[RMDB]
RNA sequence: GGGAACGACUCGAGUAGAGUCGAAAAUUGGGUGACGAUCCAAAGCGAGUUGAGUUUAACUACUUGCGUUACAGCGCCAUCGGGGAGGAUGCUAUUCAUUUUAACGUUCUCUACACGUAUAAGAAGUCCUUGACACGUGUUGAUAAACUCAGGGCGAACUUCCCAAUGCAUUCGUGCAUUGGGAAGUAAAAGAAACAACAACAACAAC
Reactivity to DMS in 0.01 (KOAc 150mM, MgCl2 10mM, bicine 150mM(pH8.5), 24C), signal-to-noise 2, nucleotides 027 to 156: u000u000g000g000g030u000g000a070c020g010a090u000c020c020a060a100a210g000c030g020a080g000u000u000g050a130g040u000u020u000a090a160c090u000a030c000u010u000g000c030g040u000u000a100c070a070g030c040g030c090c020a080u000c060g010g010g010g040a080g000g010a080u000g000c030u020a070u000u000c140a200u000u000u000u000a000a060c070g030u000u000c010u000c030u010a080c070a090c040g010u000a060u000a070a120g000a070a050g030u000c010c030u000u000g010a030c050a090c070g020u000g010u000u000g020a150u000a040a020a050c070u000c040a100g000g000g050c000g000a120
Reactivity to 2A3 in 0.01 (KOAc 150mM, MgCl2 10mM, bicine 150mM(pH8.5), 24C), signal-to-noise 4, nucleotides 027 to 156: u030u020g010g000g000u080g050a040c010g050a040u050c020c060a060a030a000g060c050g000a030g010u050u040g090a010g070u110u170u120a120a070c070u070a050c010u040u030g020c010g030u010u150a090c100a070g010c030g040c050c010a020u070c020g010g010g000g010a020g030g020a020u040g020c000u070a060u080u100c110a090u060u030u010u200a070a020c030g000u050u020c010u020c000u060a010c020a000c020g050u090a070u020a220a110g060a120a000g050u030c000c040u040u050g010a020c030a010c090g010u020g010u040u050g090a100u120a120a080a020c070u030c070a030g010g000g000c030g010a040